RNA sequence: GGGAACGACUCGAGUAGAGUCGAAAACAGCGAUAGUAUGGAUGGGACAUUGGUAUUUACAGUACUAAUGCAAAUACUGUAUUUUUCUAUAUAGUGCGCAAUAUGUAGGAAUUUGCAGUUAGAUUAGGUACAGCUAUUGGUUCGCCAAUAGCUGUACAAAAGAAACAACAACAACAAC
Reactivity to 2A3 in 0.01 (KOAc 150mM, MgCl2 10mM, bicine 150mM(pH8.5), 24C), signal-to-noise 1, nucleotides 027 to 126: c010a020g000c020g060a080u060a050g170u100a070u120g090g080a070u040g020g010g010a010c010a010u010u060g020g040u060a090u110u190u050a120c030a000g010u000a000c000u020a010a010u020g000c000a020a140a020u090a020c000u000g010u010a030u000u000u030u000u030c010u000a010u020a010u010a030g060u080g130c060g000c060a070a080u010a040u020g030u010a000g000g000a000a010u010u000u010g000c010a000g000u020u060a030g040a110u040u190a030g070
Reactivity to DMS in 0.01 (KOAc 150mM, MgCl2 10mM, bicine 150mM(pH8.5), 24C), signal-to-noise 1, nucleotides 027 to 126: c070a120g010c050g000a040u000a050g010u000a080u000g000g000a070u000g000g000g000a170c040a040u020u000g000g030u000a010u000u000u040a090c260a090g010u010a060c020u000a010a020u000g020c100a070a070a120u010a040c000u000g020u000a000u000u000u010u000u000c000u000a000u000a020u000a000g000u000g010c190g010c070a130a080u000a010u000g000u000a040g010g020a010a010u000u000u000g000c000a000g000u000u000a070g000a090u000u000a100g000